Background:
The record gives the reactivity of an RNA of 177 nucleotides to 2A3 and DMS. The DMS profile rests on 2,783 reads. For 2A3 the reverse transcriptase was SuperScript II with manganese. The reactions ran in a buffer of 150 mM KOAc, 10 mM MgCl2 and 150 mM bicine (pH 8.5), at 24 C. Reactivities are given for positions 27 through 126.

RNA sequence: GGGAACGACUCGAGUAGAGUCGAAAAUCUGGACCGUUCGCGGUCCAGAAACUACCGAGAAUGCGACUGGGUAUAUAAACGCAACCCUUGGAAACAAGGGAACACUCUGCUGCUUCGGCAGCAGAAAAACAUUGAAACGAUUCGUCGUUUCAAUGUUAAAAGAAACAACAACAACAAC
Reactivity to 2A3 in 0.01 (KOAc 150mM, MgCl2 10mM, bicine 150mM(pH8.5), 24C), signal-to-noise 2, nucleotides 027 to 126: u010c010u000g000g000a010c020c000g020u040u040c290g010c000g080g000u020c000c020a010g010a000a000a000c020u040a030c000c000g030a030g020a100a070u060g010c030g050a040c050u060g010g010g180u050a150u020a020u040a270a070a010c020g010c010a020a170c010c000c000u000u000g020g020a040a030a010c010a000a000g000g000g010a020a010c010a030c020u010c000u000g000c000u000g000c000u030u050c130g120g000c000a000g020c000a010g010a000a000a000
Reactivity to DMS in 0.01 (KOAc 150mM, MgCl2 10mM, bicine 150mM(pH8.5), 24C), signal-to-noise 3, nucleotides 027 to 126: u000c010u000g010g000a010c000c010g010u010u020c190g030c000g040g020u000c010c010a020g000a000a060a150c060u000a260c010c010g000a030g020a040a090u010g030c010g010a080c020u010g020g010g000u020a020u010a040u000a030a050a050c070g010c040a060a240c010c000c000u010u000g000g000a170a130a140c010a020a010g000g000g020a060a060c160a090c110u000c000u000g000c000u000g010c010u000u000c190g020g010c000a000g000c000a020g000a000a010a040